[RMDB]
RNA sequence: GGGAACGACUCGAGUAGAGUCGAAAAAAUCGAGGUGUAAUUACGUUGUGUUGGUAAUGAAACUCCCUCUAAAUUAUUAAAUUAGAGAAAGAAGGACUUUAUACAUCUAAUACACACGUAUAGAUCCUGACAUAGCAAACGAUUAAUCACAGAACCAGUAAUCACAAUGGUUCGCCAUUGUGAUUACAAAAGAAACAACAACAACAAC
Reactivity to 2A3 in 0.01 (KOAc 150mM, MgCl2 10mM, bicine 150mM(pH8.5), 24C), signal-to-noise 2, nucleotides 027 to 156: a010a010u090c050g030a070g000g010u040g020u040a120a200u130u000a020c020g030u160u040g020u070g010u000u080g040g000u060a070a030u080g050a070a070a050c020u030c030c020c000u000c000u020a080a090a050u080u240a170u140u260a110a090a090u000u030a010g000a000g020a110a160a040g070a050a040g010g000a020c010u070u120u000a050u020a060c020a020u050c060u080a040a060u040a060c020a000c000a000c040g000u010a020u010a000g130a010u020c020c030u040g000a010c010a110u070a040g030c050a130a000a000c030g040a040u040u100a110a010u080c040a080c020a040g100a050a030c030c020a020
Reactivity to DMS in 0.01 (KOAc 150mM, MgCl2 10mM, bicine 150mM(pH8.5), 24C), signal-to-noise 2, nucleotides 027 to 156: a070a070u000c020g020a090g010g020u010g010u010a110a120u000u000a050c030g000u010u000g020u000g010u000u000g020g020u010a100a070u000g000a100a090a100c040u000c010c010c010u010c000u000a010a010a150u010u010a190u010u020a060a080a250u000u010a040g000a120g000a090a060a100g020a100a070g010g000a100c030u000u000u010a050u000a130c040a110u000c030u020a110a110u000a090c030a010c020a000c040g000u000a030u000a050g010a030u000c040c010u010g000a090c050a110u010a180g030c040a040a070a050c000g000a170u000u010a070a100u020c020a100c060a130g000a110a050c040c020a150